[RMDB]
RNA sequence: GGGAACGACUCGAGUAGAGUCGAAAAUGAAGAUCAAGCAGUCGACAUUGUUGCUCCAGAUCUCCCAAAGGUUGGGGGGAUGCGAGAAACUCGAAAGAUUGCAGAUGUCGCGAAUCAAUAUUACAUUCCGGUCGCAAUGCACAAUGUCUCAUCACCAGUGGUUGGAUAAAUUCGUUUAUCCAACCACAAAAGAAACAACAACAACAAC
Reactivity to 2A3 in 0.01 (KOAc 150mM, MgCl2 10mM, bicine 150mM(pH8.5), 24C), signal-to-noise 4, nucleotides 027 to 156: u120g050a000a030g040a090u140c110a120a020g060c010a020g080u140c050g010a010c020a050u040u130g020u040u080g010c020u030c060c020a100g050a250u010c010u070c000c010c000a090a060a000g300g000u170u140g010g000g020g020g000g000a000u000g030c120g000a020g020a060a070a030c070u070c070g040a110a040a000g050a010u030u030g000c040a010g040a050u080g090u210c050g020c070g030a000a010u040c030a060a110u100a150u210u130a100c070a050u080u020c010c010g000g010u010c010g010c010a000a020u080g030c020a010c000a010a050u050g000u000c020u030c000a110u110c010a020c030c030a000
Reactivity to DMS in 0.01 (KOAc 150mM, MgCl2 10mM, bicine 150mM(pH8.5), 24C), signal-to-noise 1, nucleotides 027 to 156: u000g000a100a120g020a050u000c040a150a190g000c050a070g010u010c000g040a150c050a170u000u000g010u000u010g000c010u000c030c090a180g000a080u000c000u010c010c010c010a040a070a110g000g010u000u000g030g030g030g060g040g020a050u000g060c030g000a140g000a100a030a050c120u020c080g020a250a060a200g000a090u000u000g040c030a180g010a070u000g000u000c100g000c040g000a150a100u020c000a070a160u010a150u010u000a110c060a020u010u010c100c020g010g040u000c040g010c040a030a090u060g000c020a120c060a030a090u010g020u000c010u010c020a110u020c100a050c110c050a200

The data come from the RNA Mapping Database (RMDB), library OK3TST. Structure probing data (2A3 and DMS) for a 207-nucleotide construct. The DMS profile rests on 1,684 reads. The reactions ran in a buffer of 150 mM KOAc, 10 mM MgCl2 and 150 mM bicine (pH 8.5), at 24 C. DMS adducts were read by reverse transcription with MarathonRT.